[RMDB]
RNA sequence: GGGAACGACUCGAGUAGAGUCGAAAAACAGCAUAAUCUCAACUUUUGUUGAGCCACAAUUUUAAUCCUAAUUGGAGAAGGCCAAAGGACUGUACUACUUUUGUAGGUGUAGCAGUCGCCCAGUGGGCUUUGAACGUGAAUUCGUUCACGUUCAAAGAAAAGAAACAACAACAACAAC
Reactivity to 2A3 in 0.01 (KOAc 150mM, MgCl2 10mM, bicine 150mM(pH8.5), 24C), signal-to-noise 9, nucleotides 027 to 126: a000c030a040g080c030a080u120a190a120u100c010u000c010a020a040c030u110u150u210u300g010u000u010g000a000g000c000c010a110c030a040a040u040u100u090u180a050a060u030c010c020u090a150a180u090u160g020g000a070g030a130a060g100g020c040c050a030a030a000g050g000a000c000u010g010u040a030c010u010a010c010u050u120u190u300g150u180a030g010g050u060g010u060a030g040c000a010g000u000c000g010c010c010c000a020g030u080g000g020g010
Reactivity to DMS in 0.01 (KOAc 150mM, MgCl2 10mM, bicine 150mM(pH8.5), 24C), signal-to-noise 8, nucleotides 027 to 126: a080c140a120g010c120a110u030a100a090u020c000u000c010a010a030c020u010u020u020u030g020u000u000g000a020g000c130c040a050c060a060a050u020u020u020u010a070a180u010c030c020u020a090a110u030u030g000g010a060g010a100a090g010g000c090c070a030a030a010g010g000a010c010u010g020u000a070c000u020a030c000u000u020u030u030g020u010a030g010g000u010g010u000a080g010c010a010g000u000c000g010c010c010c000a080g010u010g000g000g010